RNA sequence: GGGAACGACUCGAGUAGAGUCGAAAAACACGAAUGCGCCAAAUGGCAGAUCAUCCUGACCUGGUGUUAGCUAGCAAACGAAAAACAGUUGAUAUUGAAAAUCAGGAAAAUAUCGUCUGUAAGAUUACUAAUACGUCCAGUUCGCUGGACGUAUUAGAAAAGAAACAACAACAACAAC
Reactivity to DMS in 0.01 (KOAc 150mM, MgCl2 10mM, bicine 150mM(pH8.5), 24C), signal-to-noise 4, nucleotides 027 to 126: a070c100a120c100g000a030a110u000g010c050g010c020c010a090a080a080u000g020g020c010a070g000a070u000c020a080u000c130c090u010g000a040c040c020u010g000g000u000g010u000u000a080g010c040u000a080g000c070a050a060a220c090g000a110a070a100a130a040c010a010g000u000u000g010a020u000a010u000u000g000a100a090a070a130u020c200a080g000g020a090a080a030a030u000a010u000c010g010u000c000u000g000u030a080a120g000a140u000u010a080
Chemical mapping of a 177-nucleotide RNA with DMS. Conditions: 150 mM KOAc, 10 mM MgCl2 and 150 mM bicine (pH 8.5), 24 C. Reactivities are given for positions 27 through 126.